[RMDB]
RNA sequence: GGGAACGACUCGAGUAGAGUCGAAAAUACGAAAUAAGCACAGAAGCAUGAUAUAGGGUCGUGCGUUGCGUGUUUAGUAGCGGUAGCAAGAUGCAACCACGACGAGAUGCACCUAACAUUGAGUUCACUCGUGCGUGCUAUUCGUAGCACGCGCGAGAAAAGAAACAACAACAACAAC
Reactivity to DMS in 0.01 (KOAc 150mM, MgCl2 10mM, bicine 150mM(pH8.5), 24C), signal-to-noise 2, nucleotides 027 to 126: u020a050c070g000a090a030a090u060a070a070g000c000a020c150a020g030a110a120g020c020a000u020g000a070u020a260u040a120g030g000g030u000c000g010u000g000c170g000u000u000g000c040g000u000g000u020u040u000a060g000u030a060g000c040g000g010u000a000g060c030a040a040g020a020u000g000c000a000a040c000c000a000c030g000a000c010g000a020g000a070u020g000c040a200c060c020u000a060a090c120a110u030u000g000a160g000u010u000c020a100
Reactivity to 2A3 in 0.01 (KOAc 150mM, MgCl2 10mM, bicine 150mM(pH8.5), 24C), signal-to-noise 2, nucleotides 027 to 126: u120a030c080g030a060a000a050u240a080a000g000c020a050c050a120g060a110a060g030c040a030u080g050a010u170a070u130a120g110g010g000u000c000g030u010g010c070g020u000u000g010c000g000u010g070u040u040u030a050g030u020a070g000c030g010g060u050a060g030c000a000a000g020a010u010g010c000a000a000c010c000a000c000g000a000c000g020a010g000a000u020g000c010a120c090c000u070a270a090c020a120u080u240g030a030g100u050u000c000a000